[RMDB]
RNA sequence: GGGAACGACUCGAGUAGAGUCGAAAAUGUCUGGCCUUUGGACCCCCUCUUCCUUGGUCUUCACUCCUGGCCUAGUCUGUGUCCUUGCGGAGGCUGGCUUUGCUGUUUGAGGUUUUGGUCCUUUAGGUACAUCAGUCGGGUUCGCCCGACUGAUGUAAAAAGAAACAACAACAACAAC
Reactivity to 2A3 in 0.01 (KOAc 150mM, MgCl2 10mM, bicine 150mM(pH8.5), 24C), signal-to-noise 2, nucleotides 027 to 126: u160g040u010c000u030g020g000c010c010u050u000u130g010g020a040c010c000c000c000c010u030c010u020u040c010c000u020u030g000g000u080c000u010u010c060a210c080u030c020c020u010g080g020c000c000u010a060g100u120c070u080g120u050g030u070c000c000u040u120g020c100g010g000a010g000g040c000u000g060g000c000u040u010u040g040c040u070g080u140u060u060g020a030g060g000u070u090u110u170g030g040u030c010c000u010u040u020a030g000g010
Reactivity to DMS in 0.01 (KOAc 150mM, MgCl2 10mM, bicine 150mM(pH8.5), 24C), signal-to-noise 1, nucleotides 027 to 126: u040g000u030c030u000g000g000c000c020u000u000u030g020g000a020c000c020c300c020c010u000c010u010u010c010c000u000u030g000g010u000c020u000u000c080a120c020u000c020c000u000g000g030c040c030u030a050g020u020c170u020g030u010g000u010c020c060u010u060g050c200g000g000a030g010g000c030u010g000g000c020u000u010u000g000c050u040g000u030u000u000g010a020g010g000u010u000u010u000g020g010u010c000c010u020u010u000a050g000g050
The data come from the RNA Mapping Database (RMDB), library RFM100. Structure probing data (2A3 and DMS) for a 177-nucleotide construct. The reactions ran in a buffer of 150 mM KOAc, 10 mM MgCl2 and 150 mM bicine (pH 8.5), at 24 C.